Chemical mapping of a 177-nucleotide RNA with DMS and 2A3.

RNA sequence: GGGAACGACUCGAGUAGAGUCGAAAAACAAGAUUAUAUUAACUCCUUACUAAGUGGUUUACUAUAACAUUACGGUAAAUAUCCUCAUGUGUUAUAGUAACCCAACUAUCGUAAAUACAUAUACAUAAUUCAUGGUCUAAUUCGUUAGACCAUGAAUAAAAGAAACAACAACAACAAC
Reactivity to DMS in 0.01 (KOAc 150mM, MgCl2 10mM, bicine 150mM(pH8.5), 24C), signal-to-noise 4, nucleotides 027 to 126: a080c080a080a100g000a190u020u000a050u020a070u000u020a100a110c150u020c090c080u000u000a020c020u010a170a090g000u000g000g010u000u000u000a000c010u000a000u000a010a010c000a000u010u000a230c300g000g000u010a060a080a150u030a100u000c010c010u000c140a090u020g000u000g020u000u000a020u010a000g000u000a010a000c030c000c000a010a030c030u010a070u000c160g000u010a020a040a050u010a100c140a040u000a080u000a030c210a100u020a070
Reactivity to 2A3 in 0.01 (KOAc 150mM, MgCl2 10mM, bicine 150mM(pH8.5), 24C), signal-to-noise 6, nucleotides 027 to 126: a010c070a040a040g060a150u190u140a050u070a050u160u160a050a070c070u040c030c000u030u020a030c040u040a030a040g010u010g020g000u010u010u010a000c010u000a010u000a000a000c000a000u010u060a030c020g000g020u050a110a200a160u160a170u130c000c000u060c050a050u180g000u000g000u000u000a000u000a000g000u000a000a000c000c000c000a010a020c000u060a060u140c040g020u020a000a100a000u180a050c080a050u200a010u040a090c080a070u170a120
About this RNA: Values are in units of 0.01, from 0 to 300, in steps of 10. The reactions ran in a buffer of 150 mM KOAc, 10 mM MgCl2 and 150 mM bicine (pH 8.5), at 24 C.